Source: RMDB libraries RFM100 and RFMREP, as collected in RNAgym. The record gives the reactivity of an RNA of 177 nucleotides to DMS and 2A3.
[RMDB]
RNA sequence: GGGAACGACUCGAGUAGAGUCGAAAAAACUCCGAGCUUACCGCGCUAAGUUUAAACCUUUAAAUAUGCGUUGUAAGCCAGUGACCGCUUGUCACAAGGGCAGAAUUGGAAAUGAUUUUGCCUCCCGGCUGUAUUAAGGAUUCGUCCUUAAUACAGCAAAAGAAACAACAACAACAAC
Reactivity to DMS in 0.01 (KOAc 150mM, MgCl2 10mM, bicine 150mM(pH8.5), 24C), signal-to-noise 8, nucleotides 027 to 126: a030a030c050u010c060c160g010a120g020c000u000u000a000c010c050g000c000g000c000u000a010a120g000u000u000u010a010a030a170c300c200u020u000u000a000a010a000u000a040u020g000c000g010u000u000g010u000a000a010g000c000c020a080g010u000g000a010c010c300g020c160u020u020g000u000c000a000c010a230a060g000g000g000c000a010g000a000a010u000u000g000g010a000a010a010u000g000a010u000u000u000u000g010c000c000u000c010c010c010g020
Reactivity to 2A3 in 0.01 (KOAc 150mM, MgCl2 10mM, bicine 150mM(pH8.5), 24C), signal-to-noise 9, nucleotides 027 to 126: a000a000c050u040c050c070g010a010g000c000u000u000a000c000c010g010c000g000c000u000a010a010g010u000u010u030a190a240a250c070c050u190u070u030a010a010a000u020a010u040g000c000g000u000u000g000u000a000a000g000c000c000a010g000u000g000a010c020c070g140c300u190u300g000u000c000a000c000a020a020g000g000g000c000a000g000a010a000u000u010g010g000a000a000a000u010g000a000u000u000u000u000g000c000c000u040c010c000c000g090

Notes
Conditions: 150 mM KOAc, 10 mM MgCl2 and 150 mM bicine (pH 8.5), 24 C.